[RMDB]
RNA sequence: GGGAACGACUCGAGUAGAGUCGAAAAUACACUUUUCGUGUGCUGGUUUCAUUACUUUGUCCCAAACCAGGCACGCGUAAUUAAAGGCCAGUUUGGCCAGGUCCGCGUUAUCGAUGGUCACCAAUAAACCGUCUAACGUGUUCGCACGUUAGACGGUAAAAGAAACAACAACAACAAC
Reactivity to DMS in 0.01 (KOAc 150mM, MgCl2 10mM, bicine 150mM(pH8.5), 24C), signal-to-noise 2, nucleotides 027 to 126: u030a030c090a100c130u000u000u010u000c000g030u010g020u000g020c000u000g000g000u000u000u010c230a130u000u000a110c110u010u000u000g000u000c000c020c010a120a030a030c030c010a040g030g010c040a020c000g000c090g020u010a030a060u010u000a060a080a080g010g000c000c010a170g000u000u020u000g040g000c000c000a020g010g040u000c080c010g010c060g000u000u030a110u000c080g050a050u020g020g010u010c040a060c090c080a030a180u020a030a110
Reactivity to 2A3 in 0.01 (KOAc 150mM, MgCl2 10mM, bicine 150mM(pH8.5), 24C), signal-to-noise 1, nucleotides 027 to 126: u090a000c030a040c130u010u050u060u120c030g000u000g000u010g000c020u000g000g020u030u030u040c030a040u090u130a110c080u210u160u120g080u090c000c010c000a000a000a000c000c010a010g050g000c010a000c000g050c030g010u010a030a020u100u170a140a060a090g000g000c000c010a050g100u070u090u080g070g000c040c020a020g020g000u000c010c020g110c030g020u040u050a070u210c030g050a070u070g000g000u060c030a040c030c040a110a010u110a080a080